RNA sequence: GGGAACGACUCGAGUAGAGUCGAAAAGUCGUGUCCUUCGGGACACGACAAACAUGGUAAACGCCGACACCAUGAAACAUCGAAAAACGAUCAAGGCGUAAAAAAGUCUAACCUUCGGGUUAGACAACGCCUAAGUAAUCUUCGGAUUACUUAGGCGAAAAGAAACAACAACAACAAC
Reactivity to DMS in 0.01 (KOAc 150mM, MgCl2 10mM, bicine 150mM(pH8.5), 24C), signal-to-noise 2, nucleotides 027 to 126: g000u000c000g030u000g000u000c020c000u000u050c160g020g040g000a020c000a010c000g010a000c020a000a100a070c030a010u010g000g040u000a100a070a040c020g000c000c020g000a300c180a030c000c000a000u020g000a050a130a040c210a080u000c080g010a030a070a050a050a170c110g010a030u000c300a040a140g010g010c010g050u010a000a050a040a090a110a060g000u000c000u010a000a010c000c010u000u000c160g080g020g020u000u000a000g000a000c000a030a050
Reactivity to 2A3 in 0.01 (KOAc 150mM, MgCl2 10mM, bicine 150mM(pH8.5), 24C), signal-to-noise 2, nucleotides 027 to 126: g000u000c000g010u000g000u000c010c000u010u030c170g080g030g000a000c000a000c000g000a000c000a000a000a000c000a000u000g000g010u060a160a140a050c000g020c020c000g050a040c020a020c080c010a000u000g000a100a090a000c040a050u090c040g090a090a060a080a000a090c060g010a020u150c070a080a060g010g000c000g010u040a050a090a000a000a020a040g000u010c000u000a000a000c000c010u050u080c290g090g000g000u010u000a000g000a000c000a000a000